[RMDB]
RNA sequence: GGGAACGACUCGAGUAGAGUCGAAAAUUGGGGUACAACAAACUUUGGGGUCAACAGGCGAUGGCGAUGACUCUGUGAGUUGCUUGCUCAGCUGGAAUGAAAAAUUCGAGGCAGACGCCGCGUCGUCCUGAGUCGACCAUUUCGAUGGUCGACUCAGAAAAGAAACAACAACAACAAC
Reactivity to 2A3 in 0.01 (KOAc 150mM, MgCl2 10mM, bicine 150mM(pH8.5), 24C), signal-to-noise 2, nucleotides 027 to 126: u110u060g010g000g050g000u220a150c090a110a020c040a010a160a140c090u050u010u130g020g000g000g000u060c030a060a050c010a080g000g020c000g090a120u040g140g010c000g040a060u120g060a040c020u000c030u090g000u000g010a030g010u070u090g090c030u050u140g020c020u000c010a000g080c000u080g040g080a070a060u080g140a160a050a110a000a000u070u070c060g080a030g090g010c010a000g040a090c000g040c020c010g060c030g000u030c030g060u020c000
Reactivity to DMS in 0.01 (KOAc 150mM, MgCl2 10mM, bicine 150mM(pH8.5), 24C), signal-to-noise 1, nucleotides 027 to 126: u000u030g030g000g030g000u000a130c120a130a020c290a040a070a090c170u040u000u020g000g050g000g020u000c080a000a050c060a150g010g030c110g000a070u010g000g000c040g000a130u000g000a040c100u010c000u000g010u000g000a040g000u000u000g030c130u000u030g000c190u040c070a030g030c030u010g000g010a080a000u000g000a000a170a110a050a230u000u000c000g000a150g000g000c000a010g000a180c100g000c020c020g000c050g000u000c010g030u000c070

An RNA of 177 nucleotides, treated with 2A3 and DMS and read out base by base. For DMS, 1,058 sequencing reads were counted. The reactions ran in a buffer of 150 mM KOAc, 10 mM MgCl2 and 150 mM bicine (pH 8.5), at 24 C.